Annotation: An RNA of 177 nucleotides, treated with 2A3 and read out base by base. For 2A3 the reverse transcriptase was SuperScript II with manganese. Reactivities are rounded to 0.1 and cut off at 0 and 3. Conditions: 150 mM KOAc, 10 mM MgCl2 and 150 mM bicine (pH 8.5), 24 C. It was measured as part of the RMDB library OK1LIB.
[RMDB]
RNA sequence: GGGAACGACUCGAGUAGAGUCGAAAAGUAUCCUGCAUCACAGAUUACAGGAACGUAUGAGAGCGACUUCAGUCAAGCUAAGGCAGUACCCGCAAAUACUACAGCAACACAGGUGUGGUUUGCACCCGGCUACACGGUGGUUCGCCACCGUGUAGCCAAAAGAAACAACAACAACAAC
Reactivity to 2A3 in 0.01 (KOAc 150mM, MgCl2 10mM, bicine 150mM(pH8.5), 24C), signal-to-noise 3, nucleotides 027 to 126: g040u030a140u080c000c020u000g030c040a000u110c000a030c000a040g140a110u000u220a000c000a020g060g000a080a010c020g080u050a030u130g100a130g000a000g110c010g030a010c020u090u030c080a060g030u040c050a040a020g000c050u070a060a050g090g000c030a030g040u090a080c000c030c000g000c000a030a020a050u140a070c030u060a030c030a040g030c020a050a100c030a030c100a070g030g050u020g040u050g020g140u000u000u080g010c060a100c000c000c020